[RMDB]
RNA sequence: GGGAACGACUCGAGUAGAGUCGAAAAAUGCAAAGCUAAAAAGAGCACUGUGCUCAUGGUGGAAAAUAAUUCCCAGGACUUGACAGGGAAGAAUGUACUCAUUCCACGCCCCGGGCAGAAGUCUGCUGAGACAAACAGAAGAAAGAUAGUUAGUGAAAGUAAUAUAGCCUUUCGAGGCUAUAUUACUAAAAGAAACAACAACAACAAC
Reactivity to 2A3 in 0.01 (KOAc 150mM, MgCl2 10mM, bicine 150mM(pH8.5), 24C), signal-to-noise 1, nucleotides 027 to 156: a010u080g000c020a030a080a030g010c020u120a080a010a050a030a030g030a030g000c040a010c120u150g050u140g110c000u020c020a030u080g070g040u070g030g000a010a000a070a070u170a010a120u080u010c000c000c000a010g000g040a050c140u100u130g040a010c030a080g000g000g000a010a030g010a100a030u080g030u190a100c020u020c120a080u070u020c050c010a020c050g050c010c000c010c000g040g010g000c010a000g010a150a010g010u000c020u020g020c000u020g040a050g010a080c050a020a080a000c030a000g030a080a010g030a000a110a000g050a030u140a080g020u100u030a010g080u060g100a160a100
Reactivity to DMS in 0.01 (KOAc 150mM, MgCl2 10mM, bicine 150mM(pH8.5), 24C), signal-to-noise 1, nucleotides 027 to 156: a060u000g070c020a130a130a250g040c030u000a020a090a090a120a090g000a110g000c020a180c030u000g010u000g020c040u000c000a070u010g030g030u010g000g020a060a000a070a160u010a090a090u010u010c000c030c000a300g000g000a080c110u000u010g010a070c040a110g060g070g010a080a040g000a030a080u000g010u010a110c130u010c050a140u000u000c000c030a040c110g080c040c040c040c040g020g010g020c030a030g010a120a070g010u000c030u000g030c030u000g000a140g000a060c060a090a030a110c030a120g020a070a030g000a100a030a080g010a090u000a090g010u000u000a080g020u020g010a120a090

Overview
The data come from the RNA Mapping Database (RMDB), library OK3TST. This 207-nucleotide RNA was probed chemically with 2A3 and DMS. The 2A3 profile rests on 707 reads. DMS adducts were read by reverse transcription with MarathonRT. Reactivities are rounded to 0.1 and cut off at 0 and 3. 2A3 adducts were read by reverse transcription with SuperScript II with manganese. The RNA was probed in 150 mM KOAc, 10 mM MgCl2 and 150 mM bicine (pH 8.5) at 24 C.